[RMDB]
RNA sequence: GGGAACGACUCGAGUAGAGUCGAAAAGGACUAGCCUUUGCUGAGUUCACUAGUAAAACGCGAGGAAAAUUAUAGAGACAUCCAGACACCGAUUAUGUUGUGAUAUAUUCGGUCACUUCGUAUGUCCCCGUACGUAUACUUUCGAGUAUACGUACGGAAAAGAAACAACAACAACAAC
Reactivity to DMS in 0.01 (KOAc 150mM, MgCl2 10mM, bicine 150mM(pH8.5), 24C), signal-to-noise 5, nucleotides 027 to 126: g000g010a090c040u010a070g010c010c080u010u000u010g020c020u010g000a060g000u000u010c050a260c080u010a070g010u010a040a050a080a080c130g020c030g010a050g000g010a110a080a070a080u040u040a130u020a070g000a150g000a030c020a020u000c040c050a070g010a080c180a060c010c010g000a020u010u000a030u000g010u000u000g020u020g010a060u020a030u010a040u010u000c020g010g000u000c080a110c070u020u010c060g000u000a010u000g000u000c010c010
Reactivity to 2A3 in 0.01 (KOAc 150mM, MgCl2 10mM, bicine 150mM(pH8.5), 24C), signal-to-noise 9, nucleotides 027 to 126: g040g000a020c020u030a030g030c010c040u080u090u260g000c040u090g070a050g060u070u030c030a030c080u090a030g120u170a030a020a110a050c060g020c050g040a090g040g080a020a080a060a050u280u140a130u080a090g080a000g010a050c010a010u030c040c010a050g020a040c030a010c040c000g010a010u010u030a030u070g100u140u080g120u120g140a040u050a000u010a010u110u030c010g010g010u020c020a030c040u050u080c040g010u030a010u040g020u010c010c000